[RMDB]
RNA sequence: GGGAACGACUCGAGUAGAGUCGAAAACUACUCUGAUACUUCGACCGGCUUCGGCUGUAAUGGCUGGAGUCUGGAGCUCGAUAAAGUCGGCGGAAGUUUGUCGUAACAGCGUGGCAACACGGCUGACCUCAUCCAUAUUCUUCGGAAUAUGGAUGAGAAAAGAAACAACAACAACAAC
Reactivity to DMS in 0.01 (KOAc 150mM, MgCl2 10mM, bicine 150mM(pH8.5), 24C), signal-to-noise 4, nucleotides 027 to 126: c020u000a110c030u000c020u010g000a050u000a090c130u000u000c000g010a090c010c010g020g000c000u000u000c010g020g000c000u010g030u000a130a080u010g010g030c010u000g010g000a010g010u000c000u010g030g000a110g020c140u000c010g010a080u000a090a090a090g000u000c000g000g010c070g010g010a070a070g010u000u000u000g010u010c080g000u020a060a180c010a020g000c010g020u000g000g000c250a100a200c010a010c000g000g010c010u000g000a170c100
Reactivity to 2A3 in 0.01 (KOAc 150mM, MgCl2 10mM, bicine 150mM(pH8.5), 24C), signal-to-noise 4, nucleotides 027 to 126: c000u040a030c010u010c020u060g030a040u040a190c080u010u020c000g040a050c010c000g000g000c000u010u010c000g020g000c000u030g080u190a150a120u230g020g000c010u000g000g010a000g010u000c000u000g010g010a030g010c050u040c030g010a010u080a070a160a020g030u000c000g010g020c030g040g040a050a020g010u040u080u100g090u060c020g000u020a040a020c000a010g010c000g010u000g000g000c020a050a050c010a030c010g030g000c010u010g020a030c000
Structure probing data (DMS and 2A3) for a 177-nucleotide construct. For 2A3, 7,803 sequencing reads were counted. Conditions: 150 mM KOAc, 10 mM MgCl2 and 150 mM bicine (pH 8.5), 24 C. For DMS the reverse transcriptase was MarathonRT.